[RMDB]
RNA sequence: GGGAACGACUCGAGUAGAGUCGAAAAACGUAAUGUGCCCGGCUGACCAGUUGUCUGAUCCUAAUUAUGAUGCCUUGUUGAUUUCUAUGACUAAUCAUAGUUUCAGUGUGCAAAAACACAUUGGCGCGAACACCUGGAUUCGUCCAGGUGAAAAGAAACAACAACAACAAC
Reactivity to 2A3 in 0.01 (KOAc 150mM, MgCl2 10mM, bicine 150mM(pH8.5), 24C), signal-to-noise 6, nucleotides 027 to 129: a010c050g050u080a090a040u080g060u100g020c000c000c000g040g010c030u030g030a030c000c020a060g020u060u050g030u090c010u030g020a050u030c000c020u050a080a080u150u120a110u170g180a040u110g050c020c030u060u070g050u040u030g060a280u040u060u020c030u040a070u080g110a090c040u170a090a070u130c040a050u010a030g000u010u040u020c030a020g010u000g010u010g040c040a070a050a030a080a050c000a010c000a000u010u040g000g000c040g020c010g060a000a000
Reactivity to DMS in 0.01 (KOAc 150mM, MgCl2 10mM, bicine 150mM(pH8.5), 24C), signal-to-noise 4, nucleotides 027 to 129: a070c110g030u050a100a090u010g000u000g000c000c040c000g030g030c060u020g030a110c100c070a020g030u020u000g030u000c050u020g030a080u040c020c020u000a090a060u040u030a020u000g020a060u040g020c100c080u000u000g020u000u000g000a110u000u000u000c000u000a070u040g000a090c180u000a010a030u030c040a040u000a100g020u020u020u020c020a000g030u000g000u000g030c050a040a060a050a130a130c030a020c000a050u000u000g000g000c120g000c090g030a090a120